[RMDB]
The record gives the reactivity of an RNA of 177 nucleotides to DMS and 2A3. Reactivities are given for positions 27 through 126. It was measured as part of the RMDB library TTRDEL. For DMS the reverse transcriptase was MarathonRT. The RNA was probed in 150 mM KOAc, 10 mM MgCl2 and 150 mM bicine (pH 8.5) at 24 C.

RNA sequence: GGGAACGACUCGAGUAGAGUCGAAAAGAUAUGGAUCACUCCAGGGAGCCUUUUCGGAAACGAACUGAGGCGAGGAUCUGGGUGAUCCUAAGUCAAACUCCGGUGGCAGUUCGCUGCCACCGGAGAAUCAAAUUACAUCCUUCGGGAUGUAAUUUGAAAAAGAAACAACAACAACAAC
Reactivity to DMS in 0.01 (KOAc 150mM, MgCl2 10mM, bicine 150mM(pH8.5), 24C), signal-to-noise 2, nucleotides 027 to 126: g000a040u010a300u000g000g000a010u000c010a010c000u000c000c010a020g000g000g000a040g020c000c000u000u010u010u000c000g000g000a130a110a180c010g010a010a040c300u010g000a020g000g000c000g000a040g020g000a020u030c000u000g010g000g020u000g010a010u000c000c000u000a020a070g010u000c020a120a150a180c010u000c010c010g000g030u020g000g010c000a010g000u010u000c230g010c000u010g010c000c000a000c010c000g010g020a000g020a020a030
Reactivity to 2A3 in 0.01 (KOAc 150mM, MgCl2 10mM, bicine 150mM(pH8.5), 24C), signal-to-noise 1, nucleotides 027 to 126: g000a010u080a020u200g010g000a010u000c000a000c030u170c050c020a010g000g030g010a000g020c000c000u040u040u010u020c010g030g040a090a060a010c020g050a060a060c240u300g100a010g000g010c020g000a160g000g010a010u040c010u030g030g030g010u000g000a000u000c000c010u000a010a010g020u000c010a110a050a070c010u000c020c000g010g020u000g050g030c040a060g010u110u240c240g140c140u000g040c020c000a000c020c030g000g000a000g000a000a000